[RMDB]
RNA sequence: GGGAACGACUCGAGUAGAGUCGAAAAAGGUGAAAUAAGGUCUUAGCCUUGCUUUUGAGUUUUGGAAGAUGAGCGAAGUAGGGUGAAGUAGUCAUCUUUGCUAAGCAUGUAGAGGUCUUUGUGGGAUUAUUUUUGGACAGGGGUUCGAUUCCCCUCGCCACUUUUAUGUCUUCGGACAUAAAAGUGGAAAAGAAACAACAACAACAAC
Reactivity to 2A3 in 0.01 (KOAc 150mM, MgCl2 10mM, bicine 150mM(pH8.5), 24C), signal-to-noise 3, nucleotides 027 to 156: a000g050g000u060g030a100a080a040u110a060a030g030g020u050c030u050u070a020g030c000c000u010u020g020c020u110u110u070u100g130a090g020u110u140u170u140g030g020a060a040g000a040u090g010a020g060c040g000a060a020g020u110a020g020g030g020u040g050a030a020g040u070a010g040u040c010a040u000c060u050u050u030g010c020u040a020a030g030c030a030u030g000u040a020g030a020g020g020u010c020u080u110u080g060u060g030g020g010a010u040u060a060u060u230u040u120u100g020g020a040c040a040g000g000g000g030u010u070c000g000a020u040u070c000c000c000c000u010c030g000
Reactivity to DMS in 0.01 (KOAc 150mM, MgCl2 10mM, bicine 150mM(pH8.5), 24C), signal-to-noise 1, nucleotides 027 to 156: a040g050g000u020g010a050a060a080u000a070a040g000g010u000c050u010u010a150g030c070c010u000u010g000c000u000u000u000u010g020a140g020u010u010u020u000g010g010a090a160g000a090u000g010a040g010c020g050a070a100g000u000a070g030g010g030u000g010a130a160g030u000a080g010u000c040a050u000c060u000u000u000g000c040u010a060a160g040c030a090u010g030u000a050g010a080g020g020u010c040u000u000u030g030u000g020g000g020a150u000u010a070u000u010u000u000u010g000g040a140c040a010g010g000g070g000u000u000c090g000a300u000u010c000c000c010c000u000c030g040

Source information
Chemical mapping of a 207-nucleotide RNA with 2A3 and DMS. The data come from the RNA Mapping Database (RMDB), library RSTRND. Conditions: 150 mM KOAc, 10 mM MgCl2 and 150 mM bicine (pH 8.5), 24 C. The DMS profile rests on 1,914 reads. Values cover nucleotides 27 to 156.